[RMDB]
RNA sequence: GGGAACGACUCGAGUAGAGUCGAAAAUUGAGGACGUGGGCAAGAGCGAACAGCGGGAGUUGGCAAGCCGCAUGGCGGUACUGCUGGCGCAUUUGCUCAAGUGGCAAUAUCAGCCGGGUCGUCGGGGGCAUUUGCAUAUGUUCGCAUAUGCAAAUGCAAAAGAAACAACAACAACAAC
Reactivity to 2A3 in 0.01 (KOAc 150mM, MgCl2 10mM, bicine 150mM(pH8.5), 24C), signal-to-noise 2, nucleotides 027 to 126: u020u060g030a020g040g020a010c070g030u050g010g030g050c020a020a000g020a010g050c010g020a200a100c020a010g000c000g010g030g040a150g070u170u190g160g030c060a080a030g030c010c010g070c150a110u090g220g030c000g020g000u020a070c000u040g000c000u000g020g020c000g000c020a040u010u000u010g000c000u030c020a000a010g070u080g010g010c000a000a080u050a060u200c010a010g060c030c030g070g000g000u070c090g030u020c010g030g000g000g000
Reactivity to DMS in 0.01 (KOAc 150mM, MgCl2 10mM, bicine 150mM(pH8.5), 24C), signal-to-noise 2, nucleotides 027 to 126: u000u010g010a090g020g010a050c090g020u020g000g010g000c020a010a010g000a060g010c030g000a050a110c020a050g010c000g030g010g000a130g030u010u020g010g030c180a150a100g010c010c000g020c030a150u010g020g000c000g010g030u010a070c020u000g010c000u000g000g000c040g000c030a050u010u000u000g000c000u010c020a100a060g000u000g000g000c030a100a080u020a100u010c130a130g040c020c020g010g020g000u000c070g020u000c070g030g000g000g000